[RMDB]
RNA sequence: GGGAACGACUCGAGUAGAGUCGAAAAGAUAUGGACCAUGCACCCUGCGAAGAACUACGUCGGAAACGACGUAGGGAGCAGGUGCUGGUCCUAAGUCAAAACCCACUUCUGUUCGCAGAAGUGGGAAGUGUCGAUUAUGGUUCGCCAUAAUCGACACAAAAGAAACAACAACAACAAC
Reactivity to 2A3 in 0.01 (KOAc 150mM, MgCl2 10mM, bicine 150mM(pH8.5), 24C), signal-to-noise 2, nucleotides 027 to 126: g030a020u050a000u070g010g010a020c000c010a090u300g000c000a010c090c090c190u180g010c050g270a300a020g010a030a000c000u000a000c010g000u000c010g020g000a010a040a030c000g000a000c000g010u000a000g000g000g020a010g010c110a090g040g010u010g040c010u000g000g000u000c000c000u000a000a000g000u030c010a010a030a070a190c000c020c000a000c020u000u000c000u030g060u080u110c300g040c090a000g000a010a020g020u010g000g000g000a010a040
Reactivity to DMS in 0.01 (KOAc 150mM, MgCl2 10mM, bicine 150mM(pH8.5), 24C), signal-to-noise 2, nucleotides 027 to 126: g010a020u010a210u030g000g000a030c000c000a040u020g010c000a010c120c060c300u000g010c030g020a140a110g020a120a300c000u000a000c010g000u010c000g010g030a030a020a150c010g000a000c000g000u000a010g000g000g010a040g000c010a130g000g020u000g000c000u000g020g010u000c000c000u000a000a040g030u030c010a100a030a160a210c000c000c000a030c010u020u010c000u000g000u010u010c180g000c020a000g010a020a020g020u000g000g000g010a000a020
Chemical mapping of a 177-nucleotide RNA with 2A3 and DMS. Values are in units of 0.01, from 0 to 300, in steps of 10. The RNA was probed in 150 mM KOAc, 10 mM MgCl2 and 150 mM bicine (pH 8.5) at 24 C. For 2A3 the reverse transcriptase was SuperScript II with manganese.